[RMDB]
RNA sequence: GGGAACGACUCGAGUAGAGUCGAAAACAAUACUGUAUACUAAGCCCAUGAACACAGACACCAUUACCAUUAAAAACAAGACUUACGAGUAUUAUGGCAUAGCGAAGUACGCUGAGGCUGAAGGGCUAAAAAGUAAAUCAUUCGUGAUUUACUUUUUAAAAGAAACAACAACAACAAC
Reactivity to DMS in 0.01 (KOAc 150mM, MgCl2 10mM, bicine 150mM(pH8.5), 24C), signal-to-noise 9, nucleotides 027 to 126: c070a090a100u000a100c090u010g010u000a090u010a100c100u000a080a110g010c020c020c010a080u000g010a110a060c090a070c070a040g010a080c070a060c040c040a060u010u000a080c040c030a070u000u000a030a040a070a100a070c110a070a080g000a060c090u000u000a070c080g010a100g020u000a050u000u010a050u010g000g010c060a060u000a040g000c030g010a060a080g020u000a070c080g010c020u010g000a090g010g010c030u010g010a090a070g000g000g010c080u000